[RMDB]
RNA sequence: GGGAACGACUCGAGUAGAGUCGAAAACCUCCAGAGGACCCCUUCAGCGAACAGAGGAGUCUCUACCUCGGAGGAGAAAGACCGUAGCGAUGGGGGAGAUGCUAGGAGUAGGCGGCGACCGAAGCGAAAAUCCCGCCCUUCGGGGCGGGAAAAAGAAACAACAACAACAAC
Reactivity to DMS in 0.01 (KOAc 150mM, MgCl2 10mM, bicine 150mM(pH8.5), 24C), signal-to-noise 1, nucleotides 027 to 129: c020c030u020c020c000a080g030a010g080g080a070c050c000c000c000u020u020c240a130g000c000g010a090a000c040a300g090a000g020g020a080g020u000c130u000c190u000a060c110c000u000c240g000g050a070g010g010a000g000a150a200a070g030a050c070c050g050u020a090g010c080g020a050u000g000g000g000g000g000a060g000a230u190g000c140u000a000g000g000a090g000u000a010g050g050c070g010g080c090g240a000c000c160g030a160a160g020c070g000a000a100a020a020